[RMDB]
RNA sequence: GGGAACGACUCGAGUAGAGUCGAAAAUGGCAGAGGAAGAGAGUGAUGAUUCGUUUUAUAUCAAUUCAGAGCUGAUCUCUAACUCUGUGAAGAAAGGGGUAUUGCCUAAGCAGCCUGACUUCAGGAACGAGCUUGCAAUAUUCGUAUUGCAAGCUCGAAAAGAAACAACAACAACAAC
Reactivity to DMS in 0.01 (KOAc 150mM, MgCl2 10mM, bicine 150mM(pH8.5), 24C), signal-to-noise 2, nucleotides 027 to 126: u020g000g000c000a000g020a070g010g010a170a050g010a070g000a020g020u000g010a200u010g000a070u010u030c110g000u000u000u000u000a070u000a140u050c160a000a000u010u000c030a050g010a180g020c000u000g000a190u000c000u010c000u000a020a300c040u000c000u000g020u010g010a070a030g010a020a160a070g000g010g000g010u000a090u010u000g030c060c150u000a110a110g010c070a080g000c020c010u000g000a250c170u000u000c020a060g000g000a080a110
Reactivity to 2A3 in 0.01 (KOAc 150mM, MgCl2 10mM, bicine 150mM(pH8.5), 24C), signal-to-noise 1, nucleotides 027 to 126: u120g110g000c000a010g010a000g010g020a090a000g050a020g000a010g090u070g030a030u020g030a040u030u060c010g020u040u000u090u150a300u030a060u050c070a050a020u070u030c040a030g020a010g000c010u000g050a140u100c020u010c000u000a070a000c010u000c000u000g020u000g000a010a020g070a020a060a010g080g000g030g000u120a120u110u140g040c030c000u070a170a030g000c020a010g080c000c020u040g040a090c020u040u070c040a050g090g020a050a090